[RMDB]
RNA sequence: GGGAACGACUCGAGUAGAGUCGAAAAGAUAUGGAAACCAGUAGGGAGAGCCACUCGGAAACGAGUGAAGCUCGAAGAACUACGUUUCCUAAGUCAAAACAUCCAUCGUCUUCGGACGAUGGAUGAAUCCAUAUGUUAAGUUCGCUUAACAUAUGGAAAAAGAAACAACAACAACAAC
Reactivity to 2A3 in 0.01 (KOAc 150mM, MgCl2 10mM, bicine 150mM(pH8.5), 24C), signal-to-noise 5, nucleotides 027 to 126: g000a010u010a000u050g000g010a010a010a010c040c070a080g010u000a000g010g040g010a030g000a000g010c010c000a000c000u000c000g000g010a010a010a000c000g000a000g000u010g030a130a030g010c000u000c000g020a140a000g000a000a000c000u010a000c010g010u000u000u000c000c000u000a010a000g010u000c020a010a000a110a200c000a010u000c010c000a000u000c000g010u000c000u050u090c300g170g000a000c000g000a000u000g000g000a000u000g000a000a020
Reactivity to DMS in 0.01 (KOAc 150mM, MgCl2 10mM, bicine 150mM(pH8.5), 24C), signal-to-noise 9, nucleotides 027 to 126: g010a020u000a040u010g000g000a010a010a000c030c290a170g020u000a010g000g010g000a030g010a010g020c010c000a010c000u010c000g010g000a010a010a030c000g010a010g010u000g000a140a200g010c000u000c010g010a090a160g010a190a250c000u000a010c020g000u000u000u000c000c000u000a010a110g000u000c010a130a090a140a250c010a010u000c000c000a010u000c000g020u000c000u000u010c250g020g010a020c000g010a010u000g000g000a000u000g000a050a090
Chemical mapping of a 177-nucleotide RNA with 2A3 and DMS. For 2A3 the reverse transcriptase was SuperScript II with manganese. The RNA was probed in 150 mM KOAc, 10 mM MgCl2 and 150 mM bicine (pH 8.5) at 24 C. The DMS profile rests on 23,152 reads. The data come from the RNA Mapping Database (RMDB), library TTRDES. DMS adducts were read by reverse transcription with MarathonRT.